[RMDB]
RNA sequence: GGGAACGACUCGAGUAGAGUCGAAAAUGUGGCAAAAACCUAAGUACAAAGUGACACAGAAAUUCUUAAGCAUCCAAAAGCAAGUAAAGGGUAAGGAUGGGGUAUUUGAAGAUCUUGCUUACAGGCCCACUGUCGUGUAAUUCGUUACACGACAGUGAAAAGAAACAACAACAACAAC
Reactivity to 2A3 in 0.01 (KOAc 150mM, MgCl2 10mM, bicine 150mM(pH8.5), 24C), signal-to-noise 3, nucleotides 027 to 126: u030g010u040g020g000c020a000a070a000a080a060c040c030u120a130a050g040u070a070c050a030a120a020g070u060g090a020c020a000c010a060g120a060a100a020u130u030c030u050u090a040a060g030c000a040u060c020c020a150a120a010a030g010c030a050a000g020u090a110a100a100g030g030g040u110a090a020g040g040a040u060g000g000g030g020u040a110u090u160u120g050a010a000g010a030u030c010u020u010g030c000u010u030a030c040a050g070g040c030c010
Reactivity to DMS in 0.01 (KOAc 150mM, MgCl2 10mM, bicine 150mM(pH8.5), 24C), signal-to-noise 4, nucleotides 027 to 126: u000g020u010g030g000c050a040a080a050a100a050c070c050u000a080a100g000u000a070c140a100a090a090g010u000g020a100c060a040c080a050g010a050a070a080u010u000c040u020u000a080a070g010c060a050u000c070c070a090a070a070a050g010c040a010a040g000u010a050a050a150g000g010g000u010a050a100g010g010a110u000g010g010g000g000u010a060u000u020u010g010a050a080g010a080u000c030u000u000g000c010u000u000a070c180a090g020g000c150c120